This 177-nucleotide RNA was probed chemically with DMS and 2A3. For 2A3 the reverse transcriptase was SuperScript II with manganese. Reactivities are given for positions 27 through 126. Reactivities are rounded to 0.1 and cut off at 0 and 3.
[RMDB]
RNA sequence: GGGAACGACUCGAGUAGAGUCGAAAAGAAGACGUGACGAAAAGUCACGAAAACAUGGUAAACGCCGACACCAUGAAAGAUCGAAAAACGAUCAAGGCGUAAACGACAGAGAGAUCUGUUGAAAAGAGAGCACCAUUUAGUUCGCUAAAUGGUGCUCAAAAGAAACAACAACAACAAC
Reactivity to DMS in 0.01 (KOAc 150mM, MgCl2 10mM, bicine 150mM(pH8.5), 24C), signal-to-noise 1, nucleotides 027 to 126: g000a160a150g000a230c000g000u000g000a000c000g000a070a120a030a210g030u000c000a030c000g020a110a000a120a240c040a010u040g000g020u000a150a060a000c000g060c000c040g010a080c160a060c000c000a000u000g000a040a010a080g000a030u000c000g000a120a050a200a190a070c020g000a030u040c010a030a150g000g010c000g000u000a000a090a220c000g000a000c000a000g050a000g000a270g000a040u000c000u000g060u020u000g000a060a040a140a170g000a090
Reactivity to 2A3 in 0.01 (KOAc 150mM, MgCl2 10mM, bicine 150mM(pH8.5), 24C), signal-to-noise 2, nucleotides 027 to 126: g110a000a000g120a030c010g000u000g010a020c000g040a000a220a000a130g000u000c000a000c000g000a000a000a000a000c020a010u010g010g020u090a100a070a050c000g010c010c020g120a040c050a020c070c000a000u020g000a130a080a030g000a020u030c010g060a050a000a020a000a120c000g000a000u000c050a010a030g010g000c000g000u030a110a080a000c040g000a000c020a000g000a000g000a000g000a070u010c020u010g000u020u030g070a070a070a020a000g220a020

The data come from the RNA Mapping Database (RMDB), library OK1LIB. The reactions ran in a buffer of 150 mM KOAc, 10 mM MgCl2 and 150 mM bicine (pH 8.5), at 24 C. DMS adducts were read by reverse transcription with MarathonRT. For DMS, 1,499 sequencing reads were counted.